Conditions: 150 mM KOAc, 10 mM MgCl2 and 150 mM bicine (pH 8.5), 24 C. Chemical mapping of a 207-nucleotide RNA with 2A3 and DMS. The DMS profile rests on 2,021 reads. Source: RMDB library OK3TST, as collected in RNAgym.

[RMDB]
RNA sequence: GGGAACGACUCGAGUAGAGUCGAAAACGUGUAUUGCAGGAAGCUGGAAUAGAUGAUAAAAAAUCUGAAACACUCAUGCGGUUAAUUUCCAAUGUGUAUUCUGACAUGCAUGAAAAGAUUAGUGAUUUUUCGGUUACUAAAGAACAGCAAGACCGUACCUCCAGUACUACUUCGGUAGUACUGGAGGAAAAGAAACAACAACAACAAC
Reactivity to 2A3 in 0.01 (KOAc 150mM, MgCl2 10mM, bicine 150mM(pH8.5), 24C), signal-to-noise 3, nucleotides 027 to 156: c020g010u040g000u070a040u020u130g040c020a010g060g020a070a020g010c050u050g060g030a030a010u060a110g030a040u120g030a010u290a050a200a020a020a000a010u010c040u050g010a080a080a020c020a010c030u050c020a040u090g010c090g080g000u080u080a060a070u130u020u000c020c020a080a150u140g050u040g010u110a100u090u100c030u010g000a040c030a040u100g000c000a000u000g030a020a040a030a010g080a040u090u160a050g060u020g080a070u080u010u020u090u110c050g020g020u090u020a020c010u070a150a030a090g020a080a060c020a010g070c020a030a010g040a030c030c000g000u000a030
Reactivity to DMS in 0.01 (KOAc 150mM, MgCl2 10mM, bicine 150mM(pH8.5), 24C), signal-to-noise 1, nucleotides 027 to 156: c060g060u010g050u010a060u000u010g010c030a080g000g030a110a200g030c000u000g000g010a110a060u010a140g000a080u010g020a130u020a000a030a080a030a040a030u000c020u000g010a180a070a080c030a090c140u010c040a040u010g000c000g010g020u000u000a010a080u000u000u010c030c030a120a150u010g010u010g080u020a070u010u000c050u000g020a070c030a070u000g040c030a030u000g000a060a110a050a110g000a070u010u000a070g030u000g040a040u000u000u000u000u000c070g020g010u010u000a120c050u030a030a060a110g010a110a110c030a020g020c030a090a160g000a180c000c020g030u010a120
DMS adducts were read by reverse transcription with MarathonRT.